Chemical mapping of a 177-nucleotide RNA with DMS and 2A3. The reactions ran in a buffer of 150 mM KOAc, 10 mM MgCl2 and 150 mM bicine (pH 8.5), at 24 C.
[RMDB]
RNA sequence: GGGAACGACUCGAGUAGAGUCGAAAACAUAGCGAAGCCCUGCUUCUGGCCAGAAAGCGAAACGAGAUCCGUAAGAAGCUGGCCUCCCGCCUGCAGCAGGCAAGAUCCAGUGCCUCGCAGGCGGGUGGGCUGCGCCAGGAUUCGUCCUGGCGCAGCCAAAAGAAACAACAACAACAAC
Reactivity to DMS in 0.01 (KOAc 150mM, MgCl2 10mM, bicine 150mM(pH8.5), 24C), signal-to-noise 1, nucleotides 027 to 126: c040a110u020a100g040c010g020a110a070g090c080c020c020u000g000c020u000u080c080u020g000g060c060c050a000g070a100a020a070g000c050g020a040a120a090c070g010a190g010a070u000c070c010g020u020a130a090g000a050a160g000c000u000g110g010c000c000u060c000c000c020g000c000c020u000g000c000a150g020c180a010g000g000c000a000a170g000a030u040c040c160a060g000u010g050c000c000u000c010g000c000a000g000g000c010g000g000g000u010g000
Reactivity to 2A3 in 0.01 (KOAc 150mM, MgCl2 10mM, bicine 150mM(pH8.5), 24C), signal-to-noise 1, nucleotides 027 to 126: c020a050u230a020g050c040g090a080a000g030c030c010c070u010g060c000u040u030c010u020g030g000c000c020a010g050a110a090a010g150c030g090a110a110a000c030g010a030g040a170u090c140c000g000u050a130a020g060a030a000g070c010u010g010g000c000c000u010c000c000c000g000c000c000u020g000c000a100g000c030a000g000g000c010a000a020g090a070u090c090c090a060g050u030g030c000c000u000c000g000c000a000g000g050c000g010g000g000u000g000